RNA sequence: GGGAACGACUCGAGUAGAGUCGAAAAACGGACGCUGACGCGAAAGCGUGGUCUAGCGAACCAAUUAGGCUGCUUGAUGCGGCCAAUUGCUGACAGAAAAGCUACCUUAGGGAUAACAGAGUCGUCACCUUGUUAGUAACUUCGGUUACUAACAAGGAAAAGAAACAACAACAACAAC
Reactivity to DMS in 0.01 (KOAc 150mM, MgCl2 10mM, bicine 150mM(pH8.5), 24C), signal-to-noise 6, nucleotides 027 to 126: a070c100g000g010a100c030g020c030u010g000a040c020g000c000g010a100a070a100g020c010g010u010g010g010u000c080u030a050g020c030g000a140a130c120c040a010a030u020u000a120g020g020c000u000g000c010u010u040g000a110u040g010c010g010g010c000c020a010a010u000u000g010c090u020g010a100c130a130g000a090a050a090a110g010c020u000a040c010c020u000u010a070g000g010g000a110u020a040a040c040a080g010a010g010u000c000g000u010c090a210
Reactivity to 2A3 in 0.01 (KOAc 150mM, MgCl2 10mM, bicine 150mM(pH8.5), 24C), signal-to-noise 9, nucleotides 027 to 126: a000c040g020g030a010c010g000c030u040g010a010c020g010c020g100a150a040a010g070c020g010u030g020g020u030c070u050a010g020c000g020a020a030c000c000a000a000u020u010a100g000g010c000u000g000c020u070u210g120a110u300g050c010g000g000c000c000a000a000u010u010g000c030u050g060a050c020a080g170a050a080a010a000g010c010u020a040c010c010u050u070a040g030g030g060a050u050a120a040c030a030g020a000g030u020c020g020u030c010a050
Structure probing data (DMS and 2A3) for a 177-nucleotide construct.
The data come from the RNA Mapping Database (RMDB), libraries RFM100 and RFMREP.
Reactivities are given for positions 27 through 126.
For 2A3 the reverse transcriptase was SuperScript II with manganese.